[RMDB]
RNA sequence: GGGAACGACUCGAGUAGAGUCGAAAAUAUAUUUCGGUAUUUAAGGUCAUGCAUGCAUAUUAAUAUAAUCCAGCUUUUGGGUUAUGUAUACAAUAAAAUAUACAAUAUGGACCAAUAAGCCAGCAUUAAGUAAUGAUAUUUACCGACAAGCGAGAUGAUUUAGAGCUAUCUUCGGAUAGCUCUAAAUAAAAGAAACAACAACAACAAC
Reactivity to DMS in 0.01 (KOAc 150mM, MgCl2 10mM, bicine 150mM(pH8.5), 24C), signal-to-noise 1, nucleotides 027 to 156: u010a120u000a080u000u000u000c040g040g000u000a040u000u020u000a060a250g030g000u000c020a040u000g000c130a090u010g000c070a100u010a040u010u030a110a120u010a050u000a000a000u000c010c010a030g040c300u000u000u010u000g030g000g000u000u000a010u010g000u010a130u000a080c040a110a140u000a100a070a080a100u000a050u000a010c000a020a160u010a170u000g050g000a060c010c000a050a090u000a040a080g040c040c000a000g030c050a060u010u000a030a140g000u000a050a040u000g000a100u000a080u000u000u000a040c000c000g050a100c180a050a090g010c000g060a120g010a140u000g020
Reactivity to 2A3 in 0.01 (KOAc 150mM, MgCl2 10mM, bicine 150mM(pH8.5), 24C), signal-to-noise 1, nucleotides 027 to 156: u110a000u060a050u040u100u000c000g040g010u010a030u070u110u070a090a010g090g000u010c000a000u020g020c000a010u060g010c020a010u070a020u110u130a210a060u120a050u030a180a000u000c020c000a030g040c150u000u170u110u170g050g000g010u020u120a000u080g000u030a040u000a030c000a060a050u160a240a080a100a020u130a000u000a010c030a000a030u070a030u200g020g020a030c010c000a010a010u040a050a000g010c000c000a050g020c010a010u120u030a100a100g040u120a220a020u030g010a020u030a030u150u020u030a060c020c010g000a000c010a100a040g020c030g130a030g020a170u140g000
Structure probing data (DMS and 2A3) for a 207-nucleotide construct.
2A3 adducts were read by reverse transcription with SuperScript II with manganese.
For 2A3, 716 sequencing reads were counted.
Source: RMDB library OK3TST, as collected in RNAgym.
For DMS, 1,812 sequencing reads were counted.
Conditions: 150 mM KOAc, 10 mM MgCl2 and 150 mM bicine (pH 8.5), 24 C.
For DMS the reverse transcriptase was MarathonRT.